[RMDB]
RNA sequence: GGGAACGACUCGAGUAGAGUCGAAAAAAGGACUGGUUCGCCAGUCCUUAUUCAUUCGUACGCAACGAAGCGUAAGUCAUUACGCAAUUGACUAAAAGCGUAUACGAAAGGACUUCGGUCCUUUCAAGGUCAACAUAGUAUUCGUACUAUGUUGACCAAAAGAAACAACAACAACAAC
Reactivity to 2A3 in 0.01 (KOAc 150mM, MgCl2 10mM, bicine 150mM(pH8.5), 24C), signal-to-noise 6, nucleotides 027 to 126: a000a000g010g000a000c000u010g000g040u030u060c120g030c040c000a000g000u000c000c000u000u000a000u000u010c000a010u010u020c020g030u000a010c000g000c040a120a040c090g100a100a050g000c010g010u010a020a010g140u120c110a190u030u040a010c010g000c010a040a170u120u100g090a080c060u150a050a000a080a030g020c010g010u020a030u030a040c080g000a010a000a000g000g000a000c010u020u060c250g060g000u000c010c000u010u010u010c000a000a010
Reactivity to DMS in 0.01 (KOAc 150mM, MgCl2 10mM, bicine 150mM(pH8.5), 24C), signal-to-noise 7, nucleotides 027 to 126: a030a020g000g000a010c000u000g000g010u000u010c220g030c000c000a000g000u000c000c000u000u010a010u000u000c050a160u000u000c120g000u000a030c020g000c010a070a090c130g010a130a120g000c000g000u000a000a020g000u010c300a100u000u000a010c010g010c010a110a120u010u000g010a130c170u010a070a070a070a130g000c000g000u000a020u000a070c200g000a010a010a010g010g000a010c010u000u010c190g020g000u000c000c000u000u000u000c000a090a090